[RMDB]
RNA sequence: GGGAACGACUCGAGUAGAGUCGAAAAGCAGUAUCUCGUUAGGCGAGGCUCCUAUACAAACACAGGUUGCUGAUCUGACGACGUCGAGAGACGCCCAAGAUUAGGACAGGAUAUAUCGAGCCAAGGUGAACCUGUCCAGGGUUCGCCCUGGACAGAAGUACUAUACACGAUUCGUCGUGUAUAGUACAAAAGAAACAACAACAACAAC
Reactivity to DMS in 0.01 (KOAc 150mM, MgCl2 10mM, bicine 150mM(pH8.5), 24C), signal-to-noise 4, nucleotides 027 to 156: g010c040a120g020u000a050u000c030u000c020g020u000u000a080g020g000c060g000a200g000g020c020u000c010c010u000a080u000a090c070a080a100a090c110a150c110a110g000g010u000u010g010c010u000g000a030u000c010u000g010a160c040g000a020c010g010u000c000g020a300g000a300g010a010c010g010c000c020c080a180a070g000a030u000u000a040g020g010a090c030a130g000g010a130u000a050u010a040u010c070g010a030g010c000c000a040a130g000g010u000g010a050a090c100c000u000g010u000c020c030a030g020g020g030u000u010c300g010c010c000c010u000g000g000a010c020a010g000a060a120
Reactivity to 2A3 in 0.01 (KOAc 150mM, MgCl2 10mM, bicine 150mM(pH8.5), 24C), signal-to-noise 8, nucleotides 027 to 156: g070c060a020g050u140a120u070c050u030c040g070u090u180a090g050g040c040g030a050g000g000c020u040c000c010u060a060u050a120c090a050a210a010c090a010c040a130g150g060u070u180g140c000u010g000a020u000c010u030g010a020c030g010a020c000g020u020c010g010a010g010a010g000a100c010g010c010c000c010a010a010g010a020u010u030a010g010g030a010c020a030g010g120a020u030a010u020a010u110c040g020a010g010c020c020a030a020g070g030u080g040a040a050c000c000u000g000u000c000c000a000g020g010g000u030u060c140g090c010c000c000u000g000g000a000c000a000g000a010a010
Structure probing data (DMS and 2A3) for a 207-nucleotide construct. Conditions: 150 mM KOAc, 10 mM MgCl2 and 150 mM bicine (pH 8.5), 24 C. Source: RMDB library M2RFPK, as collected in RNAgym. 2A3 adducts were read by reverse transcription with SuperScript II with manganese. For 2A3, 11,149 sequencing reads were counted.